[RMDB]
RNA sequence: GGGAACGACUCGAGUAGAGUCGAAAAGAUAUGGAGCGAUCCCAAGAUAGGCAACGGGAGCUGGAUCCAUCGGAAACGAUGGCGCACAGCGAGGAUCGUUGCCUAUCUUGGGAGUCGCUCCUAAGUCCUUAUUAUGCGGGUUCGCCCGCAUAAUAAGAAAAGAAACAACAACAACAAC
Reactivity to DMS in 0.01 (KOAc 150mM, MgCl2 10mM, bicine 150mM(pH8.5), 24C), signal-to-noise 4, nucleotides 027 to 126: g010a110u010a260u010g000g000a020g030c010g000a140u000c000c000c000a020a010g000a020u010a000g010g010c000a010a010c020g000g010g010a050g020c010u010g010g000a270u000c010c000a010u010c000g010g010a200a110a250c010g000a030u000g000g010c220g000c300a300c010a000g000c020g000a090g020g000a020u010c010g020u000u010g010c000c000u000a000u000c000u000u000g000g000g010a000g000u000c010g020c000u000c000c000u000a000a110g000u010c030